[RMDB]
RNA sequence: GGGAACGACUCGAGUAGAGUCGAAAACAAUGUUCUGAUCAUCUGAAGAUCAGCUAUUAGAAGAGAAAGAUCAGUUAAGUCCUUUGGACCUGAUCAGCUUGAUACAAGAACUACUGAUUUCAACUUCAAAACGGGUGCUACUUCGGUAGCACCCGAAUCCACUUCUGAGGUUCGCCUCAGAAGUGGAAAAAGAAACAACAACAACAAC
Reactivity to 2A3 in 0.01 (KOAc 150mM, MgCl2 10mM, bicine 150mM(pH8.5), 24C), signal-to-noise 1, nucleotides 027 to 156: c000a000a140u030g090u040u000c020u000g010a010u010c000a090u000c050u230g270a180a110g010a020u000c010a000g020c010u190a140u200u190a050g050a080a010g020a020g050a060a110a000g000a000u000c000a000g060u080u090a140a020g000u070c000c030u060u060u300g040g050a050c030c020u050g000a080u020c020a000g040c020u030u070g000a010u070a140c060a050a000g050a180a000c000u030a010c050u010g020a070u180u040u040c000a000a030c030u060u080c140a000a010a080a080c000g020g010g000u050g020c000u000a000c000u050u050c060g060g000u010a000g000c020a000c000c000c000g000a000a000